RNA sequence: GGGAACGACUCGAGUAGAGUCGAAAAAGGGAAACAGGUUAAUAUUCCUGUGCCAGUGUGCACUCAAAGCUGACGCUUUGGGGCCGCCUCUGCUGGGUUUUCGCCCAGUUGAACAGUCGAAGACCGUGUAUAUCCGUGGUUUCGACCACGGAUAUACAAAAGAAACAACAACAACAAC
Reactivity to DMS in 0.01 (KOAc 150mM, MgCl2 10mM, bicine 150mM(pH8.5), 24C), signal-to-noise 2, nucleotides 027 to 126: a120g000g010g000a070a070a040c020a000g000g000u030u030a110a120u040a220u000u000c020c010u000g010u000g010c000c030a090g030u020g000u010g030c000a100c030u000c000a000a000a000g000c010u010g020a180c260g020c010u000u050u000g000g000g000g070c010c010g000c020c000u000c000u000g030c010u010g000g000g010u000u000u050u050c140g000c000c000c020a040g010u000u030g000a080a130c210a070g010u010c050g000a050a090g000a140c050c090g020u010
Reactivity to 2A3 in 0.01 (KOAc 150mM, MgCl2 10mM, bicine 150mM(pH8.5), 24C), signal-to-noise 6, nucleotides 027 to 126: a000g140g010g000a160a300a010c020a000g030g000u090u090a100a030u060a170u220u100c000c000u010g010u010g010c000c020a020g040u020g050u110g060c060a190c300u010c000a000a000a010g000c030u130g140a050c180g010c000u010u010u000g000g000g020g000c000c000g010c010c010u010c010u010g000c010u020g020g010g010u020u030u110u210c070g020c000c000c000a000g000u010u030g010a030a040c010a040g070u070c050g050a110a030g030a060c020c020g030u010